[RMDB]
RNA sequence: GGGAACGACUCGAGUAGAGUCGAAAAGAUAUGGACCCUGCUACCCACCGUGAGUUUCGCGCAGAUAGACCAUUACUCGGAAACGAGUAAUGGUCUGUAGCGAAACUACGAGGCAGGGUCCUAAGUCGAGUCUAUGUCUGUUCGCAGACAUAGACUCAAAAGAAACAACAACAACAAC
Reactivity to DMS in 0.01 (KOAc 150mM, MgCl2 10mM, bicine 150mM(pH8.5), 24C), signal-to-noise 1, nucleotides 027 to 126: g030a120u000a140u010g010g000a020c000c000c000u010g000c010u000a110c020c040c080a300c120c000g000u010g000a070g010u000u010u000c000g040c020g030c230a120g040a070u000a060g020a030c000c000a000u000u000a000c000u000c020g000g000a070a110a210c000g010a020g000u010a000a000u010g000g000u000c000u000g010u000a020g020c020g000a020a000a000c000u010a020c000g010a140g010g010c000a000g020g000g010u000c000c000u000a000a080g010u040c140
Reactivity to 2A3 in 0.01 (KOAc 150mM, MgCl2 10mM, bicine 150mM(pH8.5), 24C), signal-to-noise 1, nucleotides 027 to 126: g110a030u300a160u300g020g010a000c000c000c020u000g000c060u190a300c030c020c030a040c010c000g030u090g300a120g040u000u010u000c010g000c020g000c040a020g170a300u230a040g060a060c000c010a020u000u020a010c000u020c060g050g040a060a070a100c050g000a010g000u020a000a010u010g030g000u000c020u000g000u030a000g000c000g000a000a000a000c000u000a020c020g000a060g010g000c040a040g000g000g000u000c000c010u000a000a020g040u040c100
Source information:
Structure probing data (DMS and 2A3) for a 177-nucleotide construct. Reactivities are given for positions 27 through 126. For DMS, 1,136 sequencing reads were counted. For DMS the reverse transcriptase was MarathonRT.